RNA sequence: GGGAACGACUCGAGUAGAGUCGAAAACGUGACCGUCGUCCUACAGGAACCCCGCAGGAUUUCGGGGAAGUGUUUAAUAUGUUUGACAAUGAACCGAGCACAGCAACGGUGAAGAACAUGCAUCGUGCACAAGGAAGGUGUUCGCACCUUCCUUGUGAAAAGAAACAACAACAACAAC
Reactivity to 2A3 in 0.01 (KOAc 150mM, MgCl2 10mM, bicine 150mM(pH8.5), 24C), signal-to-noise 5, nucleotides 027 to 126: c030g050u090g080a080c020c010g090u100c030g020u010c020c000u020a040c050a070g100g060a110a100c010c000c020c030g000c060a060g070g160a170u100u120u090c020g010g020g000g020a010a070g050u020g060u010u070u100a160a120u110a130u200g130u090u090u140g060a090c060a050a060u100g030a040a000c010c010g040a010g050c030a020c010a090g060c030a080a100c020g020g000u040g030a040a040g060a070a040c030a030u090g000c000a020u010c020g050u050g000
Reactivity to DMS in 0.01 (KOAc 150mM, MgCl2 10mM, bicine 150mM(pH8.5), 24C), signal-to-noise 5, nucleotides 027 to 126: c030g010u030g000a070c030c030g050u020c020g000u000c020c040u000a060c130a110g000g010a140a140c050c000c020c020g020c100a070g000g000a190u000u020u010c000g000g000g000g010a060a090g000u010g000u000u000u020a080a090u030a080u040g000u020u000u000g010a080c080a050a020u030g010a290a170c000c010g010a070g030c130a100c120a120g020c070a070a030c010g000g000u000g000a080a120g010a090a100c170a070u000g030c020a030u000c040g010u010g000